[RMDB]
RNA sequence: GGGAACGACUCGAGUAGAGUCGAAAACACUCGAGGAGUGGAAGGCGGGGAGACGGGGAUCCCGGGCUUACCCACGGGAACUGCUGGGUUCCCCUGAUGUCCAGUCCCUCCCCGCUCCUGGAGAAGGGAACGACGCUGUUCGCAGCGUCGAAAAGAAACAACAACAACAAC
Reactivity to 2A3 in 0.01 (KOAc 150mM, MgCl2 10mM, bicine 150mM(pH8.5), 24C), signal-to-noise 4, nucleotides 027 to 129: c020a000c010u020c010g160a000g010g000a000g020u020g000g040a110a100g030g020c050g000g020g010g000a030g000a010c020g010g000g000g020a000u000c000c000c020g020g030g030c040u110u180a170c000c010c010a040c180g020g000g010a090a030c090u120g010c000u070g050g000g000u010u030c000c000c010c000u020g130a120u120g100u040c020c010a000g060u020c050c010c000u020c020c010c000c010g000c010u020c000c010u010g020g010a000g020a040a100g050g020g020a090a020
Reactivity to DMS in 0.01 (KOAc 150mM, MgCl2 10mM, bicine 150mM(pH8.5), 24C), signal-to-noise 3, nucleotides 027 to 129: c160a060c010u040c030g030a000g050g080a000g060u010g020g110a060a130g040g010c090g020g030g000g010a050g010a220c270g070g030g020g030a090u020c000c000c000g000g000g000c030u010u050a200c060c020c020a000c300g000g000g000a080a130c210u070g030c040u020g100g000g000u000u070c000c020c000c030u050g040a080u090g000u000c130c050a070g030u060c060c170c000u030c150c040c040c040g000c020u000c050c040u040g050g020a030g030a080a090g040g010g030a050a000

Conditions: 150 mM KOAc, 10 mM MgCl2 and 150 mM bicine (pH 8.5), 24 C. Chemical mapping of a 170-nucleotide RNA with 2A3 and DMS. For DMS, 9,098 sequencing reads were counted. For DMS the reverse transcriptase was MarathonRT. The 2A3 profile rests on 9,409 reads.